[RMDB]
RNA sequence: GGGAACGACUCGAGUAGAGUCGAAAAGGAGAACGUCAACGAGCGCAUCGCCCCCGAGCUCGUCGGCAUGGACGCCCUGGACCAGGAAGGGGUGGACCGGGCCAUGCUGGAGCUGGACGGCACCCCAACCAGCAUAAUACUUCGGUAUUAUGCUGGUAAAAGAAACAACAACAACAAC
Reactivity to 2A3 in 0.01 (KOAc 150mM, MgCl2 10mM, bicine 150mM(pH8.5), 24C), signal-to-noise 7, nucleotides 027 to 126: g060g020a070g020a100a030c030g020u010c030a020a020c040g020a010g010c040g020c140a210u200c150g200c000c010c000c010c020g020a010g000c000u010c010g040u010c010g030g000c020a040u090g040g020a020c030g070c010c000c000u030g020g010a030c010c010a030g060g080a050a120g020g020g010g000u020g010g010a020c000c000g020g060g060c000c010a060u140g000c020u090g060g070a060g010c000u010g030g010a010c000g000g000c010a020c010c020c000c000a000
Reactivity to DMS in 0.01 (KOAc 150mM, MgCl2 10mM, bicine 150mM(pH8.5), 24C), signal-to-noise 8, nucleotides 027 to 126: g000g000a130g010a120a090c110g010u000c020a080a040c060g010a050g010c020g010c110a120u010c160g010c020c010c000c050c070g000a090g020c000u000c010g010u000c040g000g000c030a070u000g000g010a130c110g010c080c010c010u010g010g000a140c030c030a090g000g020a130a120g010g010g000g030u000g000g000a100c020c010g000g000g010c010c000a010u000g020c010u000g010g010a130g010c050u010g000g000a110c030g000g000c050a080c020c000c000c020a110
The record gives the reactivity of an RNA of 177 nucleotides to 2A3 and DMS.
It was measured as part of the RMDB library OK2TST.